[RMDB]
RNA sequence: GGGAACGACUCGAGUAGAGUCGAAAAGAUAUGGAGUGUAGCUAGCUGGGGAGUCGGAAACGACUCCUACAGCUUGGACCUACCUCCUAAGUCAAAACAUUUGCUGUGCUUCGGCACAGCAAAUGAACAUACUAAACUACUUCGGUAGUUUAGUAUGAAAAGAAACAACAACAACAAC
Reactivity to 2A3 in 0.01 (KOAc 150mM, MgCl2 10mM, bicine 150mM(pH8.5), 24C), signal-to-noise 4, nucleotides 027 to 126: g050a030u070a050u160g000g010a010g030u300g000u050a000g040c020u000a000g010c010u000g010g000g020g000a000g000u010c000g020g020a160a060a030c010g010a000c010u000c000c010u020a080c010a000g000c000u000u030g010g030a020c000c010u000a010c010c000u000c000c000u020a130a020g060u040c040a010a010a100a160c010a010u020u000u000g000c010u000g000u010g010c000u040u070c300g150g000c000a000c010a000g020c000a000a000a000u000g000a010a000
Reactivity to DMS in 0.01 (KOAc 150mM, MgCl2 10mM, bicine 150mM(pH8.5), 24C), signal-to-noise 9, nucleotides 027 to 126: g000a040u010a300u010g000g010a020g010u010g020u000a000g010c020u000a010g030c000u000g000g000g000g010a020g010u000c000g000g000a080a070a200c010g000a010c000u000c000c000u000a030c000a000g000c000u000u000g030g000a080c300c010u000a010c000c000u000c000c000u010a020a090g010u000c030a090a070a140a190c000a010u000u000u000g000c000u000g010u000g000c000u000u010c230g020g000c000a000c000a000g010c000a000a000a010u000g000a080a200